[RMDB]
The data come from the RNA Mapping Database (RMDB), library M2RFPK.
This 207-nucleotide RNA was probed chemically with 2A3 and DMS.
RNA sequence: GGGAACGACUCGAGUAGAGUCGAAAACUGUAUCCGAAGCCUCUAGAAGGAUAAUAUAGGCACUCCAUACCCUACUCCGACUCAAUACGUCCCCGUCGUACAGAAUGGUAACAUAUCUCUCCAAAUAAAAACGUUGUCUCGUUCGCGAGACAACGAACAUAAAAUCAAUCUUCGGAUUGAUUUUAUGAAAAGAAACAACAACAACAAC
Reactivity to 2A3 in 0.01 (KOAc 150mM, MgCl2 10mM, bicine 150mM(pH8.5), 24C), signal-to-noise 6, nucleotides 027 to 156: c030u050g040u070a050u020c030c010g050a110a050g050c040c030u090c100u130a110g050a150a050g100g020a050u070a190a060u150a050u070a080g040g000c030a020c070u000c020c010a070u060a120c010c000c020u020a040c030u000c040c030g050a020c010u010c020a060a110u090a130c020g040u030c020c010c010c010g040u070c020g000u050a050c020a060g050a090a080u070g040g010u070a080a020c030a070u120a140u040c030u000c000u010c050c030a070a100a040u150a080a110a020a030a030c010g000u010u000g000u000c000u000c000g020u060u050c150g000c000g080a000g000a000c000a000a000c000g000a000a000
Reactivity to DMS in 0.01 (KOAc 150mM, MgCl2 10mM, bicine 150mM(pH8.5), 24C), signal-to-noise 2, nucleotides 027 to 156: c050u000g020u000a040u000c010c010g000a150a190g010c020c000u000c030u020a140g000a120a120g010g000a110u000a070a100u000a090u000a120g000g030c010a080c040u000c010c030a160u000a060c040c000c000u010a060c040u000c030c010g010a110c010u000c030a100a130u000a080c030g000u000c000c010c030c030g020u000c070g000u000a090c050a100g000a060a060u000g000g000u010a080a100c080a080u010a090u000c020u000c010u010c020c050a040a050a130u000a030a030a110a110a140c030g000u000u000g010u000c000u020c000g000u000u000c280g040c020g010a040g000a010c000a000a010c010g000a020a070
About this RNA
For DMS, 4,145 sequencing reads were counted. Values cover nucleotides 27 to 156. DMS (dimethyl sulfate) methylates the pairing face of unpaired adenines and cytosines. The RNA was probed in 150 mM KOAc, 10 mM MgCl2 and 150 mM bicine (pH 8.5) at 24 C.